[RMDB]
RNA sequence: GGGAACGACUCGAGUAGAGUCGAAAAGUAUGGAUGCCACCGUGACGGCUCAAUCACACAAGUGCCAACGAUAACGAGGCGCUCGCUAUUGCUGCCUAACUGACGGCCUGACGGUCUGACGUUACAAAAAACGAAAAGUGGUUCGCCACUUUUCGAAGAUUGCAUCACUGUUCGCAGUGAUGCAAUCAAAAGAAACAACAACAACAAC
Reactivity to DMS in 0.01 (KOAc 150mM, MgCl2 10mM, bicine 150mM(pH8.5), 24C), signal-to-noise 2, nucleotides 027 to 156: g000u000a090u000g000g000a110u000g020c050c020a120c000c050g040u020g040a170c090g040g000c020u010c010a120a090u010c080a090c030a070c120a050a070g060u000g000c000c030a070a150c070g020a160u000a060a140c070g000a180g010g060c080g000c030u010c000g000c030u010a100u010u010g010c000u000g000c000c020u000a100a100c040u010g000a240c280g000g020c000c000u000g020a140c160g020g010u000c030u000g000a180c110g010u000u000a140c040a030a070a120a070a100a200c030g010a020a030a050a010g010u000g020g040u000u000c290g030c040c010a010c000u000u000u010u000c000g010a060a090
Reactivity to 2A3 in 0.01 (KOAc 150mM, MgCl2 10mM, bicine 150mM(pH8.5), 24C), signal-to-noise 5, nucleotides 027 to 156: g090u060a060u180g030g040a040u080g030c020c020a040c020c040g010u030g070a050c060g010g000c000u000c060a050a100u070c020a030c020a030c030a100a070g030u020g040c040c020a130a060c100g070a160u090a300a050c090g000a060g070g000c050g010c040u030c040g050c030u040a030u100u120g020c070u050g010c020c000u030a060a050c030u020g030a020c020g000g020c000c010u090g050a030c090g010g000u010c010u030g010a030c030g030u040u040a020c090a020a150a020a030a010a010c000g000a010a000a000a010g000u000g010g030u050u060c090g050c050c000a000c000u010u000u000u010c000g000a020a010
Chemical mapping of a 207-nucleotide RNA with DMS and 2A3. The reactions ran in a buffer of 150 mM KOAc, 10 mM MgCl2 and 150 mM bicine (pH 8.5), at 24 C. Reactivities are given for positions 27 through 156. For 2A3, 3,673 sequencing reads were counted. 2A3 adducts were read by reverse transcription with SuperScript II with manganese.